[RMDB]
The data come from the RNA Mapping Database (RMDB), library M2PK90. The record gives the reactivity of an RNA of 177 nucleotides to 2A3 and DMS. The 2A3 profile rests on 2,260 reads. Values cover nucleotides 27 to 126.
RNA sequence: GGGAACGACUCGAGUAGAGUCGAAAAUGAAACGAAGGGGGGACGGAGAAGGCUAUGUUGGCCGGGCGACGGUUGUCGCGGUUUAAGCGUGUAGGCUGGUUUUCCAGGCAAAUCCGGAGAAAAAAAACACACAAUAUUAGUUCGCUAAUAUUGUGUGAAAAGAAACAACAACAACAAC
Reactivity to 2A3 in 0.01 (KOAc 150mM, MgCl2 10mM, bicine 150mM(pH8.5), 24C), signal-to-noise 1, nucleotides 027 to 126: u040g020a020a000a000c070g040a040a040g000g010g000g000g010g000a010c020g000g000a040g020a090a020g070g000c000u020a030u190g090u100u090g050g000c000c000g000g020g010c010g030a060c010g090g010u110u120g030u080c040g020c030g050g000u080u070u060a020a010g030c050g010u060g050u060a020g050g080c000u020g000g000u000u100u010u000c010c010a020g040g010c030a060a080a050u050c010c030g010g010a050g080a100a020a000a010a000a000a010a000
Reactivity to DMS in 0.01 (KOAc 150mM, MgCl2 10mM, bicine 150mM(pH8.5), 24C), signal-to-noise 5, nucleotides 027 to 126: u010g000a110a070a080c090g010a090a080g010g010g020g010g010g010a070c070g010g010a080g000a080a080g000g000c040u000a040u010g020u000u000g000g020c020c010g010g000g010c060g010a020c040g010g000u000u010g010u010c030g010c030g010g000u000u010u000a070a120g010c030g020u000g020u010a090g000g010c030u000g000g000u000u000u010u000c030c020a120g000g000c080a030a050a100u000c030c030g010g010a120g030a010a010a000a050a060a060a080a180